[RMDB]
RNA sequence: GGGAACGACUCGAGUAGAGUCGAAAAGAUAUGGAUAUUAGUUCGCGAAUCAGGCUGACGAAGUCACUCGUAUCGGAAACGAUACGAGGUGAUCGAAGCCCUGAUUCGCGAACUAAUAUCCUAAGUCCACCCAAUUGGAGUUCGCUCCAAUUGGGUGAAAAGAAACAACAACAACAAC
Reactivity to DMS in 0.01 (KOAc 150mM, MgCl2 10mM, bicine 150mM(pH8.5), 24C), signal-to-noise 1, nucleotides 027 to 126: g000a090u000a300u010g010g000a000u000a010u000u000a000g020u000u010c020g040c000g000a020a010u000c000a030g000g010c060u000g010a300c070g020a120a110g000u000c010a090c000u000c000g040u000a000u010c000g020g000a160a020a210c010g020a010u000a000c020g000a000g030g000u010g000a030u000c010g020a300a190g010c240c050c020u000g000a010u000u000c000g010c000g000a000a010c000u000a000a010u000a000u000c000c000u020a020a090g020u010c030

Source information:
An RNA of 177 nucleotides, treated with DMS and read out base by base. It was measured as part of the RMDB library TTRINS. Reactivities are rounded to 0.1 and cut off at 0 and 3. The DMS profile rests on 1,159 reads.